[RMDB]
An RNA of 177 nucleotides, treated with 2A3 and DMS and read out base by base. DMS adducts were read by reverse transcription with MarathonRT.

RNA sequence: GGGAACGACUCGAGUAGAGUCGAAAAAUAGCAGUCAGUUGCCAUGGAGAUGAUUGCUUUAUCACCAACUCCUCUUUGCAAUGACUUCACAGCAAGGUUAUGGAGAAGCAGAUGGGCUGUGAAGGAGUUUCCAGCCAAUAUUCGUAUUGGCUGGAAAAAAAGAAACAACAACAACAAC
Reactivity to 2A3 in 0.01 (KOAc 150mM, MgCl2 10mM, bicine 150mM(pH8.5), 24C), signal-to-noise 3, nucleotides 027 to 126: a020u130a040g050c030a000g010u020c000a030g010u030u110g090c060c010a070u140g090g050a170g010a080u020g000a010u050u000g010c000u020u040u040a120u060c120a020c040c000a010a080c010u040c010c000u050c030u030u130u100g030c030a090a090u120g030a120c000u010u000c000a000c000a010g010c000a030a100g080g050u240u120a040u200g070g030a100g040a120a030g080c080a010g060a160u120g030g090g000c010u010g000u000g040a000a010g000g010a030g000
Reactivity to DMS in 0.01 (KOAc 150mM, MgCl2 10mM, bicine 150mM(pH8.5), 24C), signal-to-noise 4, nucleotides 027 to 126: a090u070a030g020c010a010g010u000c000a060g010u000u000g010c080c120a080u000g020g000a050g000a100u000g010a010u010u000g000c030u000u000u020a060u010c080a170c040c030a090a190c060u010c020c010u000c010u000u010u000g010c110a080a130u020g000a160c030u000u010c000a040c000a020g000c010a060a040g000g020u020u010a110u020g000g010a090g020a120a110g000c030a050g010a170u100g000g000g000c020u000g010u000g000a000a010g000g000a110g010